[RMDB]
RNA sequence: GGGAACGACUCGAGUAGAGUCGAAAAGGGACACUGUGGAAACGGCAGGUCAGGCCUGAUCGGAAACAGCAGCAGGUGAGUCCGCCUUAUGUGAAGGAUCGGCUGAAACACGAGGAAAUACUGAGCCUAUACGGUUUGGUUUCGACCAAACCGUAUAAAAAGAAACAACAACAACAAC
Reactivity to 2A3 in 0.01 (KOAc 150mM, MgCl2 10mM, bicine 150mM(pH8.5), 24C), signal-to-noise 5, nucleotides 027 to 126: g030g010g010a010c010a000c040u030g030u060g050g020a080a000a000c010g020g000c000a010g000g040u070c120a020g060g150c000c020u060g000a120u110c010g040g140a100a030a020c020a020g050c000a000g000c010a000g010g080u150g140a040g050u010c000c000g000c010c000u070u050a080u100g060u010g040a080a030g030g020a090u110c090g090g060c080u020g020a090a050a020c040a010c020g010a010g010g050a030a030a000u070a050c070u080g030a020g040c010c010
Reactivity to DMS in 0.01 (KOAc 150mM, MgCl2 10mM, bicine 150mM(pH8.5), 24C), signal-to-noise 5, nucleotides 027 to 126: g020g000g000a030c010a130c010u010g010u020g000g000a070a030a030c020g000g000c280a170g010g000u000c130a100g000g010c090c060u010g010a070u010c000g030g000a090a050a020c050a040g010c170a300g010c050a010g010g010u030g020a110g040u000c020c000g000c010c020u010u000a080u030g010u010g010a150a080g000g010a150u020c140g000g000c020u000g020a250a130a030c020a030c030g010a040g020g000a030a030a100u060a050c140u010g000a120g020c030c060
This 177-nucleotide RNA was probed chemically with 2A3 and DMS. Reactivities are rounded to 0.1 and cut off at 0 and 3. DMS (dimethyl sulfate) methylates the pairing face of unpaired adenines and cytosines. DMS adducts were read by reverse transcription with MarathonRT. 2A3 is a SHAPE reagent: it acylates the 2'-hydroxyl of flexible nucleotides of all four kinds. Reactivities are given for positions 27 through 126.